[RMDB]
RNA sequence: GGGAACGACUCGAGUAGAGUCGAAAAGAUAUGGAUUCGGAACUACCACAACAGUGAAAUACAUGUGGUUCGGAAACGAACCCAUGGAGUGGCCGAAUCCUAAGUCAAAACGGCCGUUCGCGGCCGAUCGUAAUGAUCUGUUCGCAGAUCAUUACGAAAAAGAAACAACAACAACAAC
Reactivity to DMS in 0.01 (KOAc 150mM, MgCl2 10mM, bicine 150mM(pH8.5), 24C), signal-to-noise 3, nucleotides 027 to 126: g000a030u000a020u010g010g000a030u010u000c000g000g000a200a140c170u020a220c000c040a050c030a290a150c300a150g020u010g030a120a100a050u000a050c000a020u000g000u010g020g010u000u010c020g000g000a020a010a030c010g000a010a010c010c000c000a010u000g010g020a010g040u000g000g030c000c000g000a020a010u000c010c010u000a010a060g000u000c010a090a050a140a200c010g010g020c000c000g010u000u020c240g030c000g030g020c000c000g030a010
Reactivity to 2A3 in 0.01 (KOAc 150mM, MgCl2 10mM, bicine 150mM(pH8.5), 24C), signal-to-noise 4, nucleotides 027 to 126: g020a000u020a000u050g000g000a000u010u010c010g000g090a260a220c140u130a110c130c010a020c010a070a050c040a130g200u180g300a190a140a050u110a020c010a010u030g220u300g030g000u000u010c000g000g000a000a000a000c000g000a000a000c010c030c000a000u000g000g030a090g010u000g010g030c010c010g000a000a000u000c000c000u000a010a000g010u000c010a000a010a120a150c020g000g000c000c000g060u100u050c300g010c030g130g010c000c000g000a030